RNA sequence: GGGAACGACUCGAGUAGAGUCGAAAAGCUGCCCUGCGAGUUGCUAUCCUCCAGGUCGCUCUGGCAGCCCUCGUCGUUGAGCGAGCUCUGCUUGGUGACCUUGGGCGACAGCAGCUUCACCAGGUCGUAGGAGAAGCAAUUUCGAUUGCUUCUCCUAAAAAGAAACAACAACAACAAC
Reactivity to DMS in 0.01 (KOAc 150mM, MgCl2 10mM, bicine 150mM(pH8.5), 24C), signal-to-noise 6, nucleotides 027 to 126: g010c080u000g020c130c010c010u000g020c140g000a010g000u000u000g020c020u000a060u000c000c000u000c010c020a020g000g010u000c020g010c000u030c090u010g000g000c000a030g010c080c130c000u010c020g020u030c030g040u040u020g010a180g010c000g000a020g000c270u010c000u000g010c000u000u030g010g010u000g000a020c010c010u000u030g020g010g000c300g010a020c060a020g000c010a020g010c010u000u030c040a110c300c030a050g000g000u010c050g010
Reactivity to 2A3 in 0.01 (KOAc 150mM, MgCl2 10mM, bicine 150mM(pH8.5), 24C), signal-to-noise 9, nucleotides 027 to 126: g070c040u060g030c010c000c000u010g020c040g010a010g010u010u000g000c000u010a020u030c000c000u000c000c020a000g000g000u000c000g010c010u170c080u120g010g000c000a000g000c020c020c000u000c000g050u000c060g110u110u300g070a110g060c000g000a000g000c030u000c000u030g000c000u010u020g000g000u010g000a000c000c000u000u020g010g000g010c060g000a000c010a000g010c000a000g000c000u030u040c020a050c030c010a010g020g040u060c060g070

An RNA of 177 nucleotides, treated with DMS and 2A3 and read out base by base. Reactivities are rounded to 0.1 and cut off at 0 and 3. The RNA was probed in 150 mM KOAc, 10 mM MgCl2 and 150 mM bicine (pH 8.5) at 24 C.